[RMDB]
RNA sequence: GGGAACGACUCGAGUAGAGUCGAAAAUGACACUUCUUGGUACUCUGGUCAACCAGCUAGGAAGGAAGAAUACACCUUUGAUCUCCUCACAAUAUCUGUCCUGUAUGGCUUUGAUGACUGGUUUGUGUCAGUCCACCCAUUUCGAUGGGUGGACUGAAAAAGAAACAACAACAACAAC
Reactivity to DMS in 0.01 (KOAc 150mM, MgCl2 10mM, bicine 150mM(pH8.5), 24C), signal-to-noise 2, nucleotides 027 to 126: u050g000a110c100a050c010u000u000c000u000u090g000g000u000a180c070u000c000u000g040g000u080c040a180a110c080c110a020g000c020u000a100g000g020a090a040g000g000a140a060g020a100a060u020a180c160a110c070c030u010u020u010g010a040u000c020u000c000c020u010c080a020c120a080a030u020a080u010c050u010g000u000c000c010u000g010u020a020u000g000g030c010u040u000u010g000a060u000g030a030c050u000g000g000u000u030u060g030u000g000
Reactivity to 2A3 in 0.01 (KOAc 150mM, MgCl2 10mM, bicine 150mM(pH8.5), 24C), signal-to-noise 4, nucleotides 027 to 126: u120g010a000c020a010c040u000u020c020u030u020g040g010u080a110c070u090c060u030g010g090u080c000a110a170c060c000a020g050c040u070a030g010g220a100a010g010g040a020a080g060a040a010u150a040c070a070c000c000u030u030u120g040a040u010c040u000c010c010u060c020a020c010a070a120u070a060u170c040u050g070u060c020c000u060g040u240a100u180g120g000c030u120u110u110g140a180u140g050a060c020u020g040g000u040u070u100g070u050g000